An RNA of 177 nucleotides, treated with 2A3 and DMS and read out base by base. Source: RMDB library TTRDES, as collected in RNAgym.
[RMDB]
RNA sequence: GGGAACGACUCGAGUAGAGUCGAAAAGAUAUGGAUCAUGCAUUCCGAUAAGCCUGAUAUCGGAAACGAUAUAGGCUUUUGACGGAGGGCAUGAUCCUAAGUCAAAAGAGUCAGUUCGCUGACUCAACAACUAAGAACACUUCGGUGUUCUUAGUUGAAAAGAAACAACAACAACAAC
Reactivity to 2A3 in 0.01 (KOAc 150mM, MgCl2 10mM, bicine 150mM(pH8.5), 24C), signal-to-noise 5, nucleotides 027 to 126: g020a010u050a010u090g000g000a010u000c000a000u010g030c020a050u020u020c020c110g200a150u090a230a010g010c010c010u200g270a030u000a010u010c010g010g000a030a010a020c010g000a000u000a000u010a010g030g000c000u020u020u040u050g110a100c120g000g000a010g000g010g010c000a010u010g010a000u000c000c000u000a000a000g000u010c000a020a000a000a240g010a000g010u010c010a000g000u040u140c250g010c160u010g010a000c000u010c000a010a010
Reactivity to DMS in 0.01 (KOAc 150mM, MgCl2 10mM, bicine 150mM(pH8.5), 24C), signal-to-noise 6, nucleotides 027 to 126: g000a030u000a300u000g010g000a010u000c000a000u000g000c010a060u010u000c000c000g010a170u000a030a030g010c000c010u000g010a020u000a000u000c000g000g010a080a040a110c010g010a020u000a010u000a030g010g000c000u000u000u000u010g000a200c170g010g000a040g000g000g020c000a000u010g000a000u000c000c000u000a010a090g000u010c030a130a080a130a120g000a020g010u000c000a000g010u000u020c300g020c000u000g000a030c000u000c000a100a170